Annotation:
An RNA of 177 nucleotides, treated with DMS and 2A3 and read out base by base. In probing experiments dimethyl sulfate is read out at A N1 and C N3, which are open when not base-paired.
[RMDB]
RNA sequence: GGGAACGACUCGAGUAGAGUCGAAAAGAUAUGGAGCUUGUCCAGGAGGUUCCCUACAUCGGAAACGAUGUAGAACACUACCCACCCUGGCAAGCUCCUAAGUCAAACUCUUCCUUCGGGAAGAGAAGUAAUGAAUUAUCUUCGGAUAAUUCAUUACAAAAGAAACAACAACAACAAC
Reactivity to DMS in 0.01 (KOAc 150mM, MgCl2 10mM, bicine 150mM(pH8.5), 24C), signal-to-noise 5, nucleotides 027 to 126: g000a010u000a190u020g000g010a010g010c000u000u010g010u010c010c010a000g000g010a100g020g010u000u000c080c110c050u000a000c000a010u000c000g010g000a060a060a080c000g010a020u000g000u000a010g010a030a040c070a080c080u010a190c010c010c060a110c130c000c000u000g000g010c010a010a000g000c000u000c000c000u000a000a060g000u000c020a140a140a210c010u000c000u000u000c000c000u000u020c200g020g000g000a020a010g010a000g010a010a080
Reactivity to 2A3 in 0.01 (KOAc 150mM, MgCl2 10mM, bicine 150mM(pH8.5), 24C), signal-to-noise 4, nucleotides 027 to 126: g030a010u040a030u090g000g000a010g000c000u020u000g080u160c020c010a010g050g000a140g140g160u040u020c020c000c000u000a010c000a000u000c000g010g000a030a020a020c000g000a000u020g000u000a010g000a010a010c050a040c060u230a110c000c010c020a100c060c000c000u000g010g010c010a000a000g010c000u000c000c010u000a000a000g000u000c000a020a060a100c010u000c000u010u000c000c000u030u060c300g120g000g000a000a000g000a000g000a030a010